[RMDB]
Structure probing data (2A3) for a 177-nucleotide construct. For 2A3, 260 sequencing reads were counted. 2A3 adducts were read by reverse transcription with SuperScript II with manganese. The data come from the RNA Mapping Database (RMDB), library RFM100. The RNA was probed in 150 mM KOAc, 10 mM MgCl2 and 150 mM bicine (pH 8.5) at 24 C.

RNA sequence: GGGAACGACUCGAGUAGAGUCGAAAAGAGCAGCCUGGGGAACCUGGUUAUAAUAGCGGCGCUAUCAGAAAUUCAACGCUAUCAAAUUUUGAUGGUGAUGGGAACGGCGCUAGCAACAAACAUAUUUAAACGUUCUGGUUUUCGAACCAGAACGUUUAAAAGAAACAACAACAACAAC
Reactivity to 2A3 in 0.01 (KOAc 150mM, MgCl2 10mM, bicine 150mM(pH8.5), 24C), signal-to-noise 1, nucleotides 027 to 126: g100a000g000c130a000g000c040c000u010g090g050g000g000a000a120c000c000u000g000g050u210u130a300u090a290a180u120a040g000c010g060g000c040g000c000u000a030u290c130a010g060a060a230a020u180u010c010a040a000c010g010c000u000a000u000c000a030a130a300u190u300u090u100g000a000u000g000g100u000g000a130u040g000g030g100a030a010c090g000g000c010g000c000u080a090g020c000a030a010c000a000a120a000c090a000u080a190u090u050u000